[RMDB]
An RNA of 177 nucleotides, treated with DMS and 2A3 and read out base by base. The 2A3 profile rests on 2,513 reads. Conditions: 150 mM KOAc, 10 mM MgCl2 and 150 mM bicine (pH 8.5), 24 C. High DMS reactivity at an A or C suggests that its Watson-Crick edge is free. 2A3 adducts were read by reverse transcription with SuperScript II with manganese. For DMS, 2,672 sequencing reads were counted. It was measured as part of the RMDB library OK1LIB.

RNA sequence: GGGAACGACUCGAGUAGAGUCGAAAAUGCCGCCACCAGCCAGACGACAACGUCCACAACCGAACCCGGCGCCACCGAGUGAUCCUGCGCCGCAGCGCCUGAUCAGGCCGCCGAUCCGUCGGUGGGCUCAUGACCAGUCCUUCGGGACUGGUCAUGAAAAAGAAACAACAACAACAAC
Reactivity to DMS in 0.01 (KOAc 150mM, MgCl2 10mM, bicine 150mM(pH8.5), 24C), signal-to-noise 2, nucleotides 027 to 126: u020g000c010c020g000c010c060a110c030c060a080g000c080c030a020g030a030c110g000a070c150a030a100c050g000u010c020c020a020c030a050a150c080c080g020a070a040c070c030c040g030g010c060g000c040c010a040c060c040g000a110g020u010g020a050u000c000c050u000g000c060g000c000c170g000c140a100g030c000g000c030c030u000g020a060u070c090a160g000g040c030c030g010c030c140g000a030u040c050c070g120u020c010g000g000u000g000g030g000c010
Reactivity to 2A3 in 0.01 (KOAc 150mM, MgCl2 10mM, bicine 150mM(pH8.5), 24C), signal-to-noise 1, nucleotides 027 to 126: u140g020c000c010g020c020c000a040c010c010a010g020c030c010a030g000a080c010g020a020c070a110a040c100g040u020c000c000a030c000a070a040c010c030g060a030a040c000c000c000g020g000c020g020c020c000a060c010c020g000a060g060u090g010a040u060c020c020u050g000c010g020c020c050g060c040a020g000c010g020c020c020u040g000a070u100c050a030g060g000c010c010g000c020c000g010a020u040c020c060g070u020c000g020g010u040g000g020g050c010